[RMDB]
RNA sequence: GGGAACGACUCGAGUAGAGUCGAAAAACCUCUAAGUUCGCUUAGAGGUAAUGAACGCUGCAAAAAGCAGCGCGCUCAGCGGAGCACGCAUAAGCAACGCAAGAACACCAUUCUUCGGAAUGGUGAAUCUGGGAUAAACAUUCGUGUUUAUCCCAGAAAAAGAAACAACAACAACAAC
Reactivity to 2A3 in 0.01 (KOAc 150mM, MgCl2 10mM, bicine 150mM(pH8.5), 24C), signal-to-noise 2, nucleotides 027 to 126: a000c000c000u000c000u000a010a040g000u040u110c150g010c160u010u000a010g000a000g020g000u010a010a030u080g020a090a020c020g000c020u000g000c020a080a120a070a090a260g020c040a010g000c010g000c010g030c010u030c020a060g020c030g070g000a020g000c030a010c080g090c030a140u060a260a040g000c010a050a020c030g000c020a020a040g070a080a020c010a000c010c000a000u010u000c000u020u030c250g090g000a010a000u000g000g000u000g020a010a040
Reactivity to DMS in 0.01 (KOAc 150mM, MgCl2 10mM, bicine 150mM(pH8.5), 24C), signal-to-noise 2, nucleotides 027 to 126: a090c020c000u000c000u000a010a020g060u000u020c200g040c040u000u000a010g010a020g010g010u000a020a040u000g000a120a100c060g020c000u000g010c000a040a030a130a180a160g000c020a020g020c000g000c040g020c030u000c050a080g000c040g000g000a250g010c040a060c150g010c140a080u000a050a090g000c060a050a160c040g000c110a170a110g010a140a200c010a010c000c000a010u000u000c040u000u020c200g040g000a030a010u010g000g020u000g010a020a030